[RMDB]
RNA sequence: GGGAACGACUCGAGUAGAGUCGAAAAAGUCUGUGGUGGUUUGUUAUGGCAGCCGAAGCAGACUAAGACAAUACAUAAAAUCAGUAGUCAUCAAGGGAUACUAAUUAAAACAACAGUGAAGUACCACUACAUACAACUAGACUGACUAAUAUUUUAGCAUAUGGAGCACGUUCGCGUGCUCCAUAUGAAAAGAAACAACAACAACAAC
Reactivity to 2A3 in 0.01 (KOAc 150mM, MgCl2 10mM, bicine 150mM(pH8.5), 24C), signal-to-noise 1, nucleotides 027 to 156: a010g000u000c010u010g000u000g000g040u070g070g070u300u300u150g100u110u110a240u170g150g030c000a000g000c000c000g020a070a030g010c000a000g020a040c010u010a010a010g000a010c010a000a150u070a140c040a100u210a070a120a000a030u100c010a000g040u010a000g030u020c000a010u060c030a110a020g050g000g030a000u030a080c000u040a050a180u250u240a110a110a000a000c030a010a010c000a030g000u010g080a080a000g080u000a070c000c000a000c040u060a000c030a040u170a040c050a060a040c010u070a020g020a010c010u000g000a000c000u100a030a200u060a200u000u090u000u100a000g000